Source: RMDB library OK1LIB, as collected in RNAgym. An RNA of 177 nucleotides, treated with DMS and 2A3 and read out base by base.
RNA sequence: GGGAACGACUCGAGUAGAGUCGAAAACUUCGAGCGGUGAGGUGGAUGUCGUCUUUGGGUGUGGGUACCACACGCCUGAAUAACGGGAGGAGCGCUGGCGGCGUGUGCCGGUCGCUGCUCUCGAGGGGGUGGACCGGUGUUUCGGCGCCGGUCUACCAAAAGAAACAACAACAACAAC
Reactivity to DMS in 0.01 (KOAc 150mM, MgCl2 10mM, bicine 150mM(pH8.5), 24C), signal-to-noise 1, nucleotides 027 to 126: c040u020u000c110g000a070g020c070g000g000u020g000a030g000g000u020g000g000a070u010g010u010c060g030u000c030u000u000u000g000g000g000u000g000u000g000g000g000u070a300c240c160a300c070a030c050g030c000c000u000g000a200a180u170a300a120c010g000g000g000a010g000g000a000g000c020g000c030u010g000g010c020g010g010c170g010u050g010u010g010c020c010g000g000u020c000g010c010u000g010c000u000c000u000c000g030a070g000g000g000
Reactivity to 2A3 in 0.01 (KOAc 150mM, MgCl2 10mM, bicine 150mM(pH8.5), 24C), signal-to-noise 3, nucleotides 027 to 126: c020u080u060c030g010a010g000c020g000g000u070g020a070g010g030u020g010g040a060u080g010u090c040g000u000c030u090u080u090g010g010g000u030g000u000g000g010g120u190a190c030c030a020c000a010c020g030c000c000u000g080a190a150u300a280a030c010g000g000g000a000g000g000a010g000c000g000c020u010g010g010c010g060g050c110g050u230g080u130g010c000c000g000g010u160c050g000c010u040g050c000u000c000u000c000g000a030g000g020g000
Conditions: 150 mM KOAc, 10 mM MgCl2 and 150 mM bicine (pH 8.5), 24 C. 2A3 adducts were read by reverse transcription with SuperScript II with manganese.